Structure probing data (2A3 and DMS) for a 207-nucleotide construct. Conditions: 150 mM KOAc, 10 mM MgCl2 and 150 mM bicine (pH 8.5), 24 C. For DMS the reverse transcriptase was MarathonRT. Source: RMDB library M2RFPK, as collected in RNAgym.

RNA sequence: GGGAACGACUCGAGUAGAGUCGAAAAUAGCGAAGUAGGAUUUUAUGCGUCAACUGUUCACAGGCUGGGGAGUCGCCGUGAAACGAAAAGCAGAAAGCGUGCUGCUUACGAUAUAAUUUCCGCACCCAUAAGAAGUCUCUGUUCGCAGAGACUUCAACAGAUGUAACAUGUUCGCAUGUUACAUCUGAAAAGAAACAACAACAACAAC
Reactivity to 2A3 in 0.01 (KOAc 150mM, MgCl2 10mM, bicine 150mM(pH8.5), 24C), signal-to-noise 8, nucleotides 027 to 156: u160a020g040c050g050a080a020g060u100a060g030g030a020u010u040u020u010a030u060g020c000g000u020c050a090a080c070u070g000u020u000c020a020c030a130g020g010c020u070g010g010g010g030a080g060u080c020g000c010c000g000u010g010a230a120a010c020g010a040a020a010a010g000c010a010g070a100a150a030g140c130g100u160g040c010u000g000c000u010u020a010c010g030a010u010a000u000a060a030u020u020u010c010c000g010c030a040c000c000c010a030u090a090a070g000a000a000g000u000c000u000c000u000g040u030u060c160g000c060a000g000a000g000a000c000u000u000c000a000a000
Reactivity to DMS in 0.01 (KOAc 150mM, MgCl2 10mM, bicine 150mM(pH8.5), 24C), signal-to-noise 4, nucleotides 027 to 156: u000a130g020c090g000a080a120g010u010a080g020g000a050u000u000u000u000a020u010g020c000g050u000c080a040a130c030u000g010u000u000c010a040c020a120g020g010c030u000g000g020g000g000a130g010u010c020g010c010c020g040u000g010a020a020a060c050g000a190a030a060a060g020c020a040g000a050a070a170g020c150g030u000g000c010u000g000c010u000u000a040c020g010a070u000a040u000a020a040u000u000u000c000c010g010c060a190c020c010c020a190u010a070a130g010a040a010g010u000c000u000c010u000g010u000u010c250g030c020a030g000a010g000a020c000u000u000c000a030a150